[RMDB]
Structure probing data (DMS and 2A3) for a 177-nucleotide construct. For 2A3, 1,309 sequencing reads were counted. The reactions ran in a buffer of 150 mM KOAc, 10 mM MgCl2 and 150 mM bicine (pH 8.5), at 24 C.
RNA sequence: GGGAACGACUCGAGUAGAGUCGAAAAGAUAUGGAAGUACUAACUUUUGACGAUUAGUUACAUCGGAAACGAUGUAAGAUCGAUAAGUUAACUUCCUAAGUCAAACACGGGUGUUCGCACCCGUGAACCAGAGUUAUUCCUUCGGGAAUAACUCUGGAAAAGAAACAACAACAACAAC
Reactivity to DMS in 0.01 (KOAc 150mM, MgCl2 10mM, bicine 150mM(pH8.5), 24C), signal-to-noise 1, nucleotides 027 to 126: g020a040u010a300u000g010g010a000a020g000u000a100c220u040a000a000c010u000u000u040u050g010a180c300g010a010u000u010a090g000u020u000a000c000a000u000c000g000g000a110a100a300c000g040a000u000g000u000a040a000g000a000u000c030g020a140u040a020a010g000u000u000a010a030c000u000u000c010c000u010a020a110g000u010c050a090a130a300c000a010c000g010g000g030u000g000u000u030c300g000c030a000c000c000c000g020u000g030a030a190
Reactivity to 2A3 in 0.01 (KOAc 150mM, MgCl2 10mM, bicine 150mM(pH8.5), 24C), signal-to-noise 1, nucleotides 027 to 126: g000a020u150a060u170g020g010a000a040g050u070a220c130u030a020a010c010u170u000u160u240g200a130c080g000a000u000u060a130g180u000u060a010c000a000u030c010g090g000a040a080a000c000g000a020u030g000u040a010a020g050a030u000c030g080a120u010a130a000g010u030u000a080a050c000u000u000c010c000u000a110a020g060u040c050a180a100a080c020a020c040g000g020g000u010g030u070u160c290g090c100a020c160c000c020g030u010g010a000a000
Notes: Source: RMDB library TTRDES, as collected in RNAgym. For DMS, 699 sequencing reads were counted. DMS (dimethyl sulfate) methylates the pairing face of unpaired adenines and cytosines.